Structure probing data (DMS and 2A3) for a 207-nucleotide construct. The reactions ran in a buffer of 150 mM KOAc, 10 mM MgCl2 and 150 mM bicine (pH 8.5), at 24 C.
RNA sequence: GGGAACGACUCGAGUAGAGUCGAAAAUUUCGAUUAGUCCGGAAAGAGUCAUUAAGAUGGCUAUACAGAAAAUGAGAACGGAUAUCGUAAUCCAUACUUCUUAUGUUUGGGAGGAUGAUCUAGAACGUCUUACUCGUCUUAAAAAUAUGGUAUACACAUAGUGGUGUUUUUUCGAAAACACCACUAUAAAAGAAACAACAACAACAAC
Reactivity to DMS in 0.01 (KOAc 150mM, MgCl2 10mM, bicine 150mM(pH8.5), 24C), signal-to-noise 3, nucleotides 027 to 156: u010u010u000c040g020a140u000u010a180g040u020c000c000g030g000a130a100a160g030a120g030u010c020a030u000u000a120a180g020a250u000g020g010c040u000a100u020a300c080a190g010a060a050a120a110u020g000a160g010a040a100c030g000g020a110u000a080u000c060g060u000a120a170u020c010c010a060u020a020c060u000u000c040u000u000a060u000g020u000u000u010g030g010g010a070g020g020a010u010g000a110u000c060u000a160g000a130a130c080g010u000c020u000u000a100c010u010c030g010u000c050u000u020a020a060a030a090a050u020a050u000g000g000u000a150u000a110c040a050c120
Reactivity to 2A3 in 0.01 (KOAc 150mM, MgCl2 10mM, bicine 150mM(pH8.5), 24C), signal-to-noise 3, nucleotides 027 to 156: u040u060u000c010g000a000u060u080a080g090u050c010c000g020g030a090a090a000g040a020g020u000c000a020u070u140a170a060g100a220u070g000g000c010u010a030u050a100c100a050g160a090a110a070a100u180g030a020g020a150a030c010g000g000a020u020a030u100c050g020u040a010a050u000c010c010a010u000a120c030u030u090c010u030u170a060u130g140u090u120u090g030g010g000a020g010g000a000u050g000a010u040c040u040a080g060a120a040c010g020u000c000u010u120a090c020u020c060g090u040c050u040u060a020a020a000a040a070u030a030u030g030g020u030a060u060a180c110a000c040